Chemical mapping of a 177-nucleotide RNA with DMS and 2A3. The RNA was probed in 150 mM KOAc, 10 mM MgCl2 and 150 mM bicine (pH 8.5) at 24 C. For DMS the reverse transcriptase was MarathonRT. For DMS, 4,291 sequencing reads were counted. For 2A3, 4,993 sequencing reads were counted.
RNA sequence: GGGAACGACUCGAGUAGAGUCGAAAAUGCCGACUGGGACGGGUUGGAUGCUAUCAGCUCCAAGACAGUGCAAGGCGCCUCAGCGUGCACGCGAACUCUGGCUGCUCUUGACCGAGGAGACAGCGAGCCCUACCUCUACAUUCGUGUAGAGGUAGGGAAAAGAAACAACAACAACAAC
Reactivity to DMS in 0.01 (KOAc 150mM, MgCl2 10mM, bicine 150mM(pH8.5), 24C), signal-to-noise 4, nucleotides 027 to 126: u000g000c030c010g000a080c040u010g000g010g020a060c060g000g000g010u000u000g000g020a050u010g010c040u010a130u010c240a090g030c000u000c020c030a060a060g010a100c100a100g010u010g010c090a090a070g010g010c040g010c040c050u000c030a090g010c040g000u000g030c020a030c090g010c130g000a080a100c100u010c020u000g010g020c020u000g000c010u000c030u000u000g000a160c100c110g000a080g000g000a030g000a060c040a040g020c060g000a110g010
Reactivity to 2A3 in 0.01 (KOAc 150mM, MgCl2 10mM, bicine 150mM(pH8.5), 24C), signal-to-noise 4, nucleotides 027 to 126: u050g020c010c010g050a090c030u030g000g010g030a020c030g050g000g020u030u040g020g020a050u190g040c040u090a120u300c080a030g020c000u000c010c000a030a020g080a090c060a040g040u050g080c030a040a080g100g000c010g020c020c020u070c040a030g020c030g060u040g020c060a010c050g030c020g030a090a040c010u030c030u080g100g010c000u030g000c000u010c010u060u090g110a140c040c020g040a020g000g030a000g020a030c020a010g000c020g010a030g010